[RMDB]
RNA sequence: GGGAACGACUCGAGUAGAGUCGAAAAAAGAAGAACUGGGACGCUCUCAAGAAGGAGGAGAUUUCCCGAAAGCUGGAGACUCGCGGAAUUUCAUUCAAGAAGAAGGUAACGGAGAAAGGAGCGGGCCGACGAUGAUAGUUCGCUAUCAUCAAAAGAAACAACAACAACAAC
Reactivity to DMS in 0.01 (KOAc 150mM, MgCl2 10mM, bicine 150mM(pH8.5), 24C), signal-to-noise 9, nucleotides 027 to 129: a000a000g000a030a010g030a070a060c130u030g000g000g000a060c110g000c020u010c060u000c090a090a100g030a060a030g030g020a050g000g020a080g000a040u030u030u020c040c010c010g030a050a050a080g040c050u020g010g010a070g020a040c000u000c060g000c140g010g010a070a040u020u040u020c090a070u010u010c080a050a030g010a050a030g020a050a030g040g030u030a070a070c130g030g020a040g000a040a080a070g000g040a050g000c090g020g010g020c050c010g000a050c160
Reactivity to 2A3 in 0.01 (KOAc 150mM, MgCl2 10mM, bicine 150mM(pH8.5), 24C), signal-to-noise 9, nucleotides 027 to 129: a000a000g100a020a000g010a030a020c070u090g020g020g010a020c030g030c030u020c000u010c060a030a060g080a050a030g070g020a010g020g010a010g010a040u060u040u030c000c010c010g020a080a050a010g020c050u040g010g020a040g010a040c010u020c050g050c040g020g020a010a010u060u120u110c050a060u090u070c040a070a030g040a020a000g020a010a000g080g000u040a060a030c060g040g000a030g000a030a050a030g020g000a000g010c050g010g010g000c010c010g020a050c080